[RMDB]
RNA sequence: GGGAACGACUCGAGUAGAGUCGAAAAUGCAAUGAGCCAUCACCAAUUAAUAAUAAGUUACGACGAUCUUUGUCUGCUAAUUGUGAACCUAAUGUUGCAGGUAAUGUAUAGCCGAUAGAACCCCAUAAAACUCCUCUUAGUUCGCUAAGAGGAGUUUAAAAGAAACAACAACAACAAC
Reactivity to DMS in 0.01 (KOAc 150mM, MgCl2 10mM, bicine 150mM(pH8.5), 24C), signal-to-noise 5, nucleotides 027 to 126: u020g010c050a040a070u020g010a110g000c040c030a050u000c030a110c060c050a060a070u020u020a090a070u020a080a050u020a070a100g010u000u010a080c090g010a040c020g000a070u000c050u000u010u030g010u010c030u010g010c010u000a030a030u010u000g010u030g000a060a080c100c070u040a070a060u010g000u010u010g000c050a020g010g000u010a050a050u010g000u020a070u010a060g030c000c030g010a090u010a080g010a100a130c040c010c000c040a100u010a020
Reactivity to 2A3 in 0.01 (KOAc 150mM, MgCl2 10mM, bicine 150mM(pH8.5), 24C), signal-to-noise 3, nucleotides 027 to 126: u090g020c030a020a040u160g000a020g060c040c020a040u040c000a040c030c020a030a050u140u080a090a060u160a100a060u070a090a110g080u020u110a010c040g010a020c020g050a120u060c030u070u050u060g040u000c000u010g000c000u010a070a060u090u050g050u030g070a070a050c020c010u060a130a050u190g100u180u040g070c020a010g020g040u000a000a040u030g110u040a040u050a130g040c030c010g040a010u020a060g050a040a070c000c000c000c020a020u110a090